An RNA of 177 nucleotides, treated with DMS and 2A3 and read out base by base. Reactivities are given for positions 27 through 126. For DMS the reverse transcriptase was MarathonRT. Conditions: 150 mM KOAc, 10 mM MgCl2 and 150 mM bicine (pH 8.5), 24 C.
RNA sequence: GGGAACGACUCGAGUAGAGUCGAAAAGAUAUGGAGCUGUGCUGGGAGCUGGUCUCGGAAACGAGAUACAGCGAAGAACAGCCAGCUCCUAAGUCAAAACUCCGUAGGAGUUCGCUCCUACGGAGAACUACGUUUUAGGGUUCGCCCUAAAACGUAGAAAAGAAACAACAACAACAAC
Reactivity to DMS in 0.01 (KOAc 150mM, MgCl2 10mM, bicine 150mM(pH8.5), 24C), signal-to-noise 1, nucleotides 027 to 126: g020a030u000a150u000g000g000a020g000c010u000g010u020g020c020u000g000g000g010a300g030c000u010g000g010u000c000u000c010g010g000a030a020a090c000g010a020g000a000u000a080c020a030g000c020g000a120a120g020a120a190c020a010g000c000c000a000g020c000u000c000c000u020a000a050g000u000c010a120a110a150a190c010u000c000c020g020u000a000g010g000a030g030u020u020c280g020c020u000c000c000u000a010c010g000g020a010g000a010a080
Reactivity to 2A3 in 0.01 (KOAc 150mM, MgCl2 10mM, bicine 150mM(pH8.5), 24C), signal-to-noise 1, nucleotides 027 to 126: g000a000u040a030u080g000g000a000g030c010u040g010u300g050c020u020g000g100g120a200g020c010u000g000g000u000c000u000c000g000g000a060a010a010c010g000a000g040a010u300a300c000a000g000c040g050a140a050g120a080a000c000a000g000c000c000a000g000c000u000c000c000u000a000a000g010u000c000a040a010a050a170c000u000c000c010g000u020a000g030g030a040g000u060u120c250g070c080u010c000c000u000a000c000g000g000a000g010a000a020